RNA sequence: GGGAACGACUCGAGUAGAGUCGAAAAUGCGGCAGGCCCAGGCGAGUGGCCCGCGCACGGUGGUCGUCACCCUGGGAGAACGCGGCUGUCUAGCACUGAGCGGCGACGACUGGACCGAGCUGCCGGCAGUAAACAGGAACUUCGGUUCCUGUUUACUAAAAGAAACAACAACAACAAC
Reactivity to 2A3 in 0.01 (KOAc 150mM, MgCl2 10mM, bicine 150mM(pH8.5), 24C), signal-to-noise 2, nucleotides 027 to 126: u130g050c010g010g000c010a000g020g010c000c010c010a000g040g010c100g030a100g000u040g000g010c030c010c000g030c020g050c020a100c120g270g000u070g010g000u080c060g010u010c000a020c030c010c000u000g030g050g010a060g040a070a000c080g000c030g080g020c020u010g010u020c020u020a020g040c020a040c090u200g280a030g140c240g110g000c000g020a020c060g000a000c030u050g050g000a100c010c000g010a010g010c010u000g000c000c040g010g000c000
Reactivity to DMS in 0.01 (KOAc 150mM, MgCl2 10mM, bicine 150mM(pH8.5), 24C), signal-to-noise 4, nucleotides 027 to 126: u000g030c000g020g010c000a040g020g010c010c000c010a040g010g020c260g010a150g020u000g000g030c010c010c030g020c090g020c160a090c250g000g020u000g010g010u000c120g000u020c040a090c120c010c000u000g020g000g000a140g010a100a200c160g000c000g000g010c030u000g010u010c000u010a300g000c020a050c050u010g000a140g020c160g020g000c010g010a130c230g000a020c010u010g010g010a120c020c010g010a110g000c020u000g000c020c020g010g010c170

The record gives the reactivity of an RNA of 177 nucleotides to 2A3 and DMS.
Source: RMDB library OK2TST, as collected in RNAgym.
The DMS profile rests on 3,278 reads.
Reactivities are rounded to 0.1 and cut off at 0 and 3.
As a SHAPE reagent, 2A3 marks flexible, mostly unpaired nucleotides at the ribose 2'-OH.
For 2A3, 2,183 sequencing reads were counted.